[RMDB]
RNA sequence: GGGAACGACUCGAGUAGAGUCGAAAAACGUGAAACUGAUCGAUGGAGUAGUUAAAACGAGUAUGAUCAGCACGCUAUGGGUGAGCAAACGGGAAUUGUACGAUUACGAGGACUUUCCAUUCGAGCAGCUACCAGUCGAUUUCGAUCGACUGGUAGCAAAAGAAACAACAACAACAAC
Reactivity to DMS in 0.01 (KOAc 150mM, MgCl2 10mM, bicine 150mM(pH8.5), 24C), signal-to-noise 1, nucleotides 027 to 126: a050c080g020u010g050a200a070a240c010u000g000a010u000c010g010a000u010g000g030a120g030u000a010g070u000u010a070a040a100a090c090g040a300g010u000a070u000g000a060u000c010a020g050c000a060c150g010c000u000a030u010g000g010g020u000g010a050g010c040a000a140a100c000g000g020g010a040a140u010u010g040u000a040c080g000a080u000u020a070c000g030a160g000g020a100c150u000u020u000c020c040a140u000u000c010g010a070g020c200a080
Reactivity to 2A3 in 0.01 (KOAc 150mM, MgCl2 10mM, bicine 150mM(pH8.5), 24C), signal-to-noise 1, nucleotides 027 to 126: a000c050g060u060g090a140a030a020c000u010g020a040u010c020g010a040u130g080g030a020g090u100a010g050u070u200a060a090a000a090c050g000a030g020u050a040u080g000a020u000c010a000g000c000a010c010g000c020u070a140u210g120g060g030u080g080a070g040c050a100a090a160c050g000g010g180a140a090u120u000g060u040a010c040g040a030u120u040a030c030g070a010g000g090a020c000u040u040u000c000c000a040u150u150c020g020a010g040c040a000
Annotation
Chemical mapping of a 177-nucleotide RNA with DMS and 2A3. The reactions ran in a buffer of 150 mM KOAc, 10 mM MgCl2 and 150 mM bicine (pH 8.5), at 24 C. DMS adducts were read by reverse transcription with MarathonRT. 2A3 adducts were read by reverse transcription with SuperScript II with manganese. The 2A3 profile rests on 808 reads.